This 177-nucleotide RNA was probed chemically with 2A3. The data come from the RNA Mapping Database (RMDB), library OK1LIB. Conditions: 150 mM KOAc, 10 mM MgCl2 and 150 mM bicine (pH 8.5), 24 C. Values are in units of 0.01, from 0 to 300, in steps of 10.
RNA sequence: GGGAACGACUCGAGUAGAGUCGAAAAGCUCUAGCCUAUUAAAUUAUUUAGGGUCAGCUGCUUAUCAGCUGUUGCUUACAAACAGAAAUGUCAACUCGUCAACAACCUGUUGAAAACUAGAGUUGCCCGCGCGUAGCUGAUUCGUCAGCUACGCGCGAAAAGAAACAACAACAACAAC
Reactivity to 2A3 in 0.01 (KOAc 150mM, MgCl2 10mM, bicine 150mM(pH8.5), 24C), signal-to-noise 1, nucleotides 027 to 126: g000c000u000c000u000a000g000c000c010u030a110u100u250a020a150a130u240u190a300u000u110u050a060g000g000g070u000c000a000g000c000u000g000c060u110u300a300u300c000a000g050c000u000g000u000u030g080c030u000u000a040c010a080a000a000c000a000g060a000a200a100u000g020u190c030a040a140c150u240c250g190u000c040a060a070c000a130a130c110c000u010g040u060u030g030a140a140a000a000c000u000a000g000a000g000u000u000g010c000c000